Chemical mapping of a 177-nucleotide RNA with DMS.

[RMDB]
RNA sequence: GGGAACGACUCGAGUAGAGUCGAAAAGAUAUGGAAGCCGAAGGCUCGAUAAGUCGAUGUCGGAAACGACAUUCGACUUUUGACGAGCUCAAGGCUUCCUAAGUCAAAAGCUAACUUCGGUUAGCAAGUAAGAGUAUGCGUUCGCGCAUACUCUUACAAAAGAAACAACAACAACAAC
Reactivity to DMS in 0.01 (KOAc 150mM, MgCl2 10mM, bicine 150mM(pH8.5), 24C), signal-to-noise 2, nucleotides 027 to 126: g000a010u000a300u010g020g000a030a000g040c000c000g010a300a290g000g010c000u000c000g010a130u000a020a000g020u010c020g010a020u000g030u000c000g020g000a190a080a210c000g000a030c000a000u010u000c010g010a000c000u000u000u000u000g000a220c230g010a050g000c000u000c000a030a300g000g010c000u020u010c000c000u000a000a140g010u000c040a100a050a200a160g000c000u000a030a000c000u010u000c230g070g000u010u020a010g000c010a040a020

The DMS profile rests on 1,010 reads.